[RMDB]
The record gives the reactivity of an RNA of 177 nucleotides to DMS and 2A3.
The data come from the RNA Mapping Database (RMDB), library TTRDES.
High DMS reactivity at an A or C suggests that its Watson-Crick edge is free.
The RNA was probed in 150 mM KOAc, 10 mM MgCl2 and 150 mM bicine (pH 8.5) at 24 C.

RNA sequence: GGGAACGACUCGAGUAGAGUCGAAAAGAUAUGGACUAGUACAGGCAUCGAUCAUACUGUCUCGGAAACGAGAUUAUGGGAGCCUGACUAGUCCUAAGUCAAAACCAACAUCGUUCGCGAUGUUGGAGAUAUCAAGGAAGUUCGCUUCCUUGAUAUCAAAAGAAACAACAACAACAAC
Reactivity to DMS in 0.01 (KOAc 150mM, MgCl2 10mM, bicine 150mM(pH8.5), 24C), signal-to-noise 9, nucleotides 027 to 126: g000a010u000a020u010g000g000a020c000u000a000g010u000a100c010a010g020g020c000a300u000c210g010a010u010c010a000u000a020c300u010g000u000c000u000c000g020g010a010a000a020c010g010a010g010a010u000u000a000u000g000g000g000a010g040c000c000u000g000a020c000u000a000g000u000c000c000u000a000a040g000u010c000a160a070a150a250c000c000a010a010c000a010u000c000g020u000u010c300g020c020g010a010u000g000u000u000g000g000a030
Reactivity to 2A3 in 0.01 (KOAc 150mM, MgCl2 10mM, bicine 150mM(pH8.5), 24C), signal-to-noise 9, nucleotides 027 to 126: g000a000u010a010u050g000g000a000c000u010a010g010u250a300c010a010g000g010c010a070u300c280g000a000u010c010a000u010a050c090u070g010u020c000u000c000g010g000a000a010a000c000g000a000g000a010u010u010a000u000g010g000g000a010g000c000c000u010g000a000c000u000a000g000u000c000c000u000a000a000g000u000c010a010a010a020a070c000c000a000a000c000a010u010c010g090u130u100c300g020c020g200a000u000g000u000u000g000g000a040
For DMS the reverse transcriptase was MarathonRT.